[RMDB]
RNA sequence: GGGAACGACUCGAGUAGAGUCGAAAAGCUGUCAUUAUUGCAGUGUUUGUGUACGCAAUCUGGGGUAUCCAGAUUUUCUGGGCGAAUUGAUAGGAAGAUAUCAUGGGCGCGAUAAACCCUAAAGAAAAUUACGGGACUGAUUCGUCAGUCCCGUAAUAAAAGAAACAACAACAACAAC
Reactivity to DMS in 0.01 (KOAc 150mM, MgCl2 10mM, bicine 150mM(pH8.5), 24C), signal-to-noise 1, nucleotides 027 to 126: g000c000u000g010u000c080a170u010u000a070u020u010g010c060a000g000u010g000u000u000u010g000u000g000u010a070c080g000c150a060a040u000c020u010g000g010g010g050u000a110u000c000c020a020g030a090u000u000u010u000c050u000g040g010g050c070g010a140a060u010u000g060a050u000a040g000g000a140a110g010a100u000a020u000c020a050u000g000g040g020c050g010c110g020a100u000a050a070a080c000c010c040u000a030a080a140g000a040a070a100